Structure probing data (DMS and 2A3) for a 207-nucleotide construct. 2A3 adducts were read by reverse transcription with SuperScript II with manganese.
RNA sequence: GGGAACGACUCGAGUAGAGUCGAAAACAUGUUUGACAAGUUGAAGCAUGACAUUCACUUGUGGGGCCUACGCAACUCCCUGCUCGUGGCGCCAAUGCCAACCGCGUCGACGGCUCAGAUCAUGGGCAACAACGAGGCGUUCGAGCCGUACACGACCGAUACCUUUAGCGUUCGCGCUAAAGGUAUCAAAAGAAACAACAACAACAAC
Reactivity to DMS in 0.01 (KOAc 150mM, MgCl2 10mM, bicine 150mM(pH8.5), 24C), signal-to-noise 1, nucleotides 027 to 156: c050a130u010g020u020u010u050g020a150c040a070a090g020u030u000g010a110a110g010c060a110u000g000a060c050a150u010u020c100a030c090u010u000g040u030g030g030g030g000c080c080u000a110c160g050c030a100a170c050u000c000c070c000u000g000c010u010c040g000u020g000g020c040g010c010c060a040a030u010g010c000c050a130a090c000c010g020c050g030u000c040g040a160c030g030g080c000u010c050a000g000a090u000c100a060u000g010g050g010c030a150a140c090a060a160c020g000a030g010g040c040g030u010u000c020g000a050g010c000c010g010u000a100c110a080c000g020a110c060c020
Reactivity to 2A3 in 0.01 (KOAc 150mM, MgCl2 10mM, bicine 150mM(pH8.5), 24C), signal-to-noise 4, nucleotides 027 to 156: c060a030u110g070u120u110u130g110a060c080a060a060g000u050u040g120a090a010g090c090a110u070g060a050c030a130u030u040c010a020c000u020u030g000u040g020g040g020g010c010c040u110a070c090g000c060a040a120c020u000c010c000c000u010g010c000u000c010g030u050g010g000c040g000c040c050a070a090u080g000c020c020a050a020c040c040g060c040g090u050c070g040a060c000g010g000c020u020c030a090g010a070u040c020a060u160g000g070g000c050a080a040c030a060a000c090g090a050g050g000c030g030u040u030c030g020a000g000c010c000g010u050a080c060a010c110g040a010c040c040
Background: The reactions ran in a buffer of 150 mM KOAc, 10 mM MgCl2 and 150 mM bicine (pH 8.5), at 24 C. Source: RMDB library OK3TST, as collected in RNAgym.